[RMDB]
RNA sequence: GGGAACGACUCGAGUAGAGUCGAAAAGGUGGGACUUUUCCUUCUGGAACCAAGCGGUUGGUUCCGAGGGGGGUGUGAUCCAAACCUGCCGUAGAAACUGGAUUACGACGUCUACCCGGGAUUCAAACCCGGUCCCCUCCAGAAGUGAUUCUGGAUGGAAGAAGUAUCACUUCGGUGAUACUUCUUCAAAAGAAACAACAACAACAAC
Reactivity to 2A3 in 0.01 (KOAc 150mM, MgCl2 10mM, bicine 150mM(pH8.5), 24C), signal-to-noise 1, nucleotides 027 to 156: g030g010u060g000g050g000a030c010u130u090u130u100c000c000u020u030c120u160g000g000a010a010c020c010a040a010g240c160g300g230u070u020g010g000u000u000c000c030g020a010g000g000g000g030g030g010u050g030u060g070a060u000c020c000a090a090a170c020c010u070g050c070c020g030u030a050g160a120a160a020c120u070g010g020a070u180u180a070c060g100a000c050g150u010c000u010a030c000c010c000g000g010g000a090u220u200c090a150a090a120c000c010c000g020g000u050c020c000c000c010u000c010c000a000g010a050a030g050u010g100a120u000u000c000u000g000g030a050u100g060
An RNA of 207 nucleotides, treated with 2A3 and read out base by base.
The reactions ran in a buffer of 150 mM KOAc, 10 mM MgCl2 and 150 mM bicine (pH 8.5), at 24 C.
The data come from the RNA Mapping Database (RMDB), library VIROID.
For 2A3 the reverse transcriptase was SuperScript II with manganese.